[RMDB]
RNA sequence: GGGAACGACUCGAGUAGAGUCGAAAAGCACCCUUCGGGGUGCAAAAAGAUAUGGAGAAGAGCACAAGCCCAAUCGGAAACGAUUGAGGCUGCUCCUCCUAAGUCAAAAAAGGGACUUCGGUCCCAAGUUCAAGAAAUACUUCGGUAUUUCUUGAACAAAAGAAACAACAACAACAAC
Reactivity to DMS in 0.01 (KOAc 150mM, MgCl2 10mM, bicine 150mM(pH8.5), 24C), signal-to-noise 3, nucleotides 027 to 126: g020c010a010c000c000c000u000u050c140g030g040g020g000u000g040c000a010a030a070a120a030g010a030u000a300u000g010g000a000g020a070a140g030a020g000c010a170c250a300a090g000c000c000c000a010a010u010c000g020g000a180a150a160c000g000a010u000u000g000a100g010g020c000u000g000c000u010c000c000u000c020c000u000a050a120g000u010c040a000a030a100a080a130a130g000g000g000a010c000u000u010c160g080g010u000c000c000c000a000a060
Reactivity to 2A3 in 0.01 (KOAc 150mM, MgCl2 10mM, bicine 150mM(pH8.5), 24C), signal-to-noise 3, nucleotides 027 to 126: g010c010a000c010c010c000u020u090c300g030g000g020g010u000g010c000a000a030a000a000a020g040a020u090a030u100g020g010a020g010a300a080g000a050g030c020a120c090a280a020g000c000c000c000a010a000u010c010g020g000a090a040a030c010g000a010u010u050g070a190g030g010c000u000g000c010u000c000c000u000c000c000u000a140a020g030u030c050a060a000a030a070a100a200g000g000g010a020c030u070u160c300g110g010u000c000c090c010a000a000